Chemical mapping of a 177-nucleotide RNA with DMS and 2A3.
The RNA was probed in 150 mM KOAc, 10 mM MgCl2 and 150 mM bicine (pH 8.5) at 24 C.
The data come from the RNA Mapping Database (RMDB), library OK1LIB.
[RMDB]
RNA sequence: GGGAACGACUCGAGUAGAGUCGAAAACUGUUUUCUCUACAGAUAACAAGGGAGUUCGACGUAUAGCAGAGUGGGUAGUGUCUCCGCAAAAGAAAGCCGAAUGCAGUGCGCUGCAAACCAUACUGCCAUUCUCCAAGUCUUUCGAGACUUGGAGAAUAAAAGAAACAACAACAACAAC
Reactivity to DMS in 0.01 (KOAc 150mM, MgCl2 10mM, bicine 150mM(pH8.5), 24C), signal-to-noise 3, nucleotides 027 to 126: c080u000g000u000u010u010u000c020u010c090u010a080c120a030g000a080u020a020a070c110a040a070g010g000g010a100g050u000u020c040g000a080c110g030u010a070u020a130g020c040a060g020a250g100u000g040g000g000u000a050g000u030g000u030c030u000c020c080g030c050a030a040a120a090g000a090a070a040g000c030c020g020a070a100u050g000c010a080g050u030g000c050g030c040u000g020c040a040a030a240c040c020a020u000a060c010u010g000c080c080
Reactivity to 2A3 in 0.01 (KOAc 150mM, MgCl2 10mM, bicine 150mM(pH8.5), 24C), signal-to-noise 5, nucleotides 027 to 126: c020u010g030u020u000u070u030c020u000c010u020a040c050a060g120a070u100a170a070c070a070a030g060g020g000a060g020u050u100c030g070a060c020g100u160a040u080a170g010c030a010g010a020g060u080g010g020g000u040a050g030u030g080u040c010u000c030c020g030c060a020a110a000a060g130a050a070a000g030c050c030g020a040a020u060g010c010a020g010u020g040c110g000c040u010g000c000a060a030a040c010c010a020u040a120c020u070g040c020c000